[RMDB]
RNA sequence: GGGAACGACUCGAGUAGAGUCGAAAAGCAACGCAAAGCCGCGUCAAGUGGAGUUAGCGAGAAGAGACUAGGCUUUGGUUUCUUCAAGUGAAGCGGUCACCAAUCAGGUGUGGUAGUUACCGUAAAAAUAACCGCUCUUUGUUCGCAAAGAGCGGAAGUUGUUAUUUUAGUUCGCUAAAAUAACAACAAAAGAAACAACAACAACAAC
Reactivity to DMS in 0.01 (KOAc 150mM, MgCl2 10mM, bicine 150mM(pH8.5), 24C), signal-to-noise 5, nucleotides 027 to 156: g010c050a060a040c020g010c040a080a080a140g020c020c020g010c030g020u000c060a080a110g030u000g010g000a140g020u000u000a260g020c030g000a300g010a050a040g000a060g020a030c010u010a070g020g020c130u010u000u000g010g020u000u000u000c000u000u000c010a050a300g030u000g000a100a200g010c010g010g010u000c040a060c030c020a040a130u010c080a110g010g010u000g010u000g020g030u010a070g010u000u000a050c020c020g000u000a000a040a050a110a070u010a110a190c000c000g000c000u000c010u000u000u000g010u000u010c270g030c010a020a020a010g000a020g010c010g010g010a000a010
Reactivity to 2A3 in 0.01 (KOAc 150mM, MgCl2 10mM, bicine 150mM(pH8.5), 24C), signal-to-noise 9, nucleotides 027 to 156: g030c020a020a030c040g010c110a060a050a020g020c020c020g030c020g050u060c080a100a090g040u080g070g060a120g050u150u160a040g050c060g020a050g010a080a010g030a010g000a020c020u040a040g060g100c010u110u100u080g010g010u010u000u010c000u010u020c020a080a050g030u040g100a090a010g010c000g000g020u020c020a010c020c010a030a110u170c060a050g090g060u070g020u040g100g030u050a060g030u070u090a020c020c020g020u060a030a040a030a040a040u140a080a060c000c010g000c000u000c000u010u000u000g010u030u050c120g000c090a000a000a000g000a000g000c000g000g000a000a000